[RMDB]
RNA sequence: GGGAACGACUCGAGUAGAGUCGAAAACGAGCUUAAGCGGCGAGCCGAGGGGGACGUCCUCGUAAAAACGUCACCUAAAGAUAACUGGCAAACAAAACUACGCUUUAGCUGCCUAAUUGCUGCAGCUAGCUCCUCCCGCCAUCGCCCGCGUGGCGUUCUAACAAAGGAAGUUCGCUUCCUUUGUUAGAAAAGAAACAACAACAACAAC
Reactivity to 2A3 in 0.01 (KOAc 150mM, MgCl2 10mM, bicine 150mM(pH8.5), 24C), signal-to-noise 7, nucleotides 027 to 156: c040g000a010g010c020u140u140a150a030g010c030g030g000c020g020a000g030c000c000g000a010g020g000g000g050g000a000c010g080u150c000c010u010c040g110u190a000a020a010a000a000c000g010u010c010a020c010c010u110a120a090a090g180a160u160a150a130c110u130g080g000c100a130a100a040c060a070a190a140a040c090u200a100c070g020c010u070u070u060a010g000c000u000g010c010c010u160a250a220u190u190g040c160u100g000c010a000g010c000u000a000g000c000u000c000c010u040c000c000c000g010c000c000a040u040c030g010c010c020c000g050c020g020u030g000g000c000g000u000u000